Source: RMDB library OK1LIB, as collected in RNAgym. Chemical mapping of a 177-nucleotide RNA with 2A3 and DMS. For 2A3 the reverse transcriptase was SuperScript II with manganese. Values are in units of 0.01, from 0 to 300, in steps of 10. The reactions ran in a buffer of 150 mM KOAc, 10 mM MgCl2 and 150 mM bicine (pH 8.5), at 24 C. Values cover nucleotides 27 to 126.
[RMDB]
RNA sequence: GGGAACGACUCGAGUAGAGUCGAAAAUGCAUAGAAGUGCGGAGAAUGAAAAAUAUCCCCUUAGAGUGACAGCAGAAAGCUGGCUUGGAGAUAUUCCUCUAAAGGAUCUGCAGAUAAGGCACUUUGCUCAUUACUUAUGCUUCGGCAUAAGUAAUGAAAAAGAAACAACAACAACAAC
Reactivity to 2A3 in 0.01 (KOAc 150mM, MgCl2 10mM, bicine 150mM(pH8.5), 24C), signal-to-noise 9, nucleotides 027 to 126: u100g010c020a030u040a150g140a160a020g140u040g010c030g060g030a050g070a100a170u230g080a090a120a010a000a000u040a040u040c010c010c000c000u060u110a040g010a010g120u110g120a070c000a000g010c010a010g250a210a180a010g030c020u020g020g000c010u030u090g020g010a060g010a030u040a060u070u040c020c030u040c030u110a100a130a020g080g000a070u020c010u050g010c020a010g020a210u130a110a060g050g010c010a000c000u020u020u020g030c040
Reactivity to DMS in 0.01 (KOAc 150mM, MgCl2 10mM, bicine 150mM(pH8.5), 24C), signal-to-noise 8, nucleotides 027 to 126: u010g010c030a050u020a090g010a090a080g010u010g010c020g010g010a070g010a240a110u020g010a010a070a060a050a060u000a020u010c000c010c010c040u020u040a120g010a070g010u010g000a120c010a020g020c000a180g000a120a140a160g010c010u000g000g000c020u010u020g020g010a050g000a050u000a040u000u000c060c050u000c140u030a060a080a060g000g010a220u000c020u010g000c020a040g000a070u010a070a070g010g010c050a050c030u000u000u000g010c160